[RMDB]
RNA sequence: GGGAACGACUCGAGUAGAGUCGAAAAGAUAUGGAGAUGGAGGUGCCGAAAAAACGCUUGGAUUUAAGUGUCGGAAACGACACUUUGUCAGCGUUUUUUCGGAACUACACCCACAUCUCCUAAGUCAUCAAUACUACCGGUUCGCCGGUAGUAUUGAAAAAGAAACAACAACAACAAC
Reactivity to DMS in 0.01 (KOAc 150mM, MgCl2 10mM, bicine 150mM(pH8.5), 24C), signal-to-noise 3, nucleotides 027 to 126: g020a040u000a300u000g000g000a020g010a010u000g000g000a300g000g010u000g030c000c000g000a000a010a010a000a000a010c000g020c000u000u000g010g020a040u010u010u000a000a010g020u000g010u000c000g000g000a130a130a190c000g010a010c010a000c010u000u000u000g010u000c010a020g000c000g010u000u000u000u000u000u000c010g010g000a010a020c090u010a300c000a020c000c000c300a200c000a000u000c010u010c000c000u000a010a100g000u000c030a200
Reactivity to 2A3 in 0.01 (KOAc 150mM, MgCl2 10mM, bicine 150mM(pH8.5), 24C), signal-to-noise 1, nucleotides 027 to 126: g030a010u070a070u270g000g000a020g000a010u010g030g000a040g010g060u020g050c000c000g000a010a020a000a000a000a000c010g040c060u220u300g260g010a100u300u300u140a010a010g030u000g000u010c000g040g040a100a050a070c000g000a000c020a000c000u000u000u000g040u000c000a000g020c010g000u000u000u000u000u000u000c020g000g000a000a000c000u030a000c010a010c010c000c000a010c000a020u030c000u010c000c000u000a040a000g010u000c040a030